RNA sequence: GGGAACGACUCGAGUAGAGUCGAAAAGAUAUGGAAAUCCUGGACAUGAACGGGCAACAGACACCAUUAUUCGGAAACGAAUAAUGGUGUCUGUUGCCUGGUUCAACAGCCAGUGAUUUCCUAAGUCCUAUAUCGCUAAGUUCGCUUAGCGAUAUAGAAAAGAAACAACAACAACAAC
Reactivity to DMS in 0.01 (KOAc 150mM, MgCl2 10mM, bicine 150mM(pH8.5), 24C), signal-to-noise 2, nucleotides 027 to 126: g020a100u010a300u010g000g000a000a020a000u000c010c010u000g010g010a030c140a300u010g010a020a010c000g020g000g040c000a020a040c000a020g020a020c030a020c020c000a010u000u000a000u000u010c030g030g010a110a090a260c000g020a030a040u010a000a010u010g000g050u000g000u000c000u010g010u010u000g010c000c010u000g000g020u010u000c010a020a070c300a200g020c000c000a000g000u010g000a010u000u000u000c000c010u010a040a100g010u000c030
Annotation
The data come from the RNA Mapping Database (RMDB), library TTRINS. Chemical mapping of a 177-nucleotide RNA with DMS. The RNA was probed in 150 mM KOAc, 10 mM MgCl2 and 150 mM bicine (pH 8.5) at 24 C.